[RMDB]
RNA sequence: GGGAACGACUCGAGUAGAGUCGAAAAUAGUUUGCGUCAAAUUUUUGACGUAGCCCCCAUUGAACUCGAAAAUAAAUUCACACCUUUGAGUGUGGAGUCUACACCAGUUGAACCUCCAACUGUAGAUAACGGAUAGACUUCGGUCUAUCCAAAAGAAACAACAACAACAAC
Reactivity to 2A3 in 0.01 (KOAc 150mM, MgCl2 10mM, bicine 150mM(pH8.5), 24C), signal-to-noise 9, nucleotides 027 to 129: u130a020g140u050u080u050g010c000g000u000c030a070a100a180u220u230u040u040u040g000a000c000g000u000a000g000c000c000c000c000c030a070u050u180g070a080a060c060u050c210g080a070a050a040a060u240a030a080a020u080u020c010a010c000a000c010c010u160u210u300g140a210g050u010g000u000g000g010a000g000u000c010u030a030c030a060c050c070a010g000u010u020g050a090a060c010c030u100c030c000a020a010c010u000g020u020a020g000a030u030a080a040c080
Reactivity to DMS in 0.01 (KOAc 150mM, MgCl2 10mM, bicine 150mM(pH8.5), 24C), signal-to-noise 7, nucleotides 027 to 129: u080a000g040u010u010u010g030c000g000u000c000a000a020a230u070u090u040u020u020g010a040c020g000u000a000g040c000c000c000c000c010a180u040u040g040a090a060c100u040c110g040a040a040a090a080u050a070a050a070u000u000c020a040c020a030c000c050u060u060u070g050a120g040u000g050u000g000g000a000g010u060c060u000a040c080a110c160c070a040g000u010u030g000a110a150c050c020u050c030c000a020a030c000u020g000u000a050g030a040u010a070a060c170

About this RNA: Chemical mapping of a 170-nucleotide RNA with 2A3 and DMS. The reactions ran in a buffer of 150 mM KOAc, 10 mM MgCl2 and 150 mM bicine (pH 8.5), at 24 C. For DMS the reverse transcriptase was MarathonRT. The 2A3 profile rests on 45,795 reads.